[RMDB]
RNA sequence: GGGAACGACUCGAGUAGAGUCGAAAAAGCAGGCUGGUGGCGGGUCUUACUCCCGGCCUGGCUGCAUCGGGGAUGGUGGCGGGUGUGGCGAUCGGCCUGGCGGUGACCGCCUGGGUGGUGAAUGCCCUACGGCUGGUAGUUUCGACUACCAGCCGUAAAAAGAAACAACAACAACAAC
Reactivity to 2A3 in 0.01 (KOAc 150mM, MgCl2 10mM, bicine 150mM(pH8.5), 24C), signal-to-noise 1, nucleotides 027 to 126: a000g010c030a020g080g110c020u030g040g070u060g260g200c030g000g050g000u120c070u120u060a030c040u010c000c020c020g000g070c000c000u030g080g000c020u000g060c000a100u110c000g000g000g000g000a150u050g000g070u030g020g000c220g000g040g030u080g070u120g000g060c080g150a120u050c000g060g020c000c000u050g010g000c050g020g020u220g220a200c030c020g000c020c000u010g020g020g010u010g000g000u020g060a080a000u130g060c000c000c000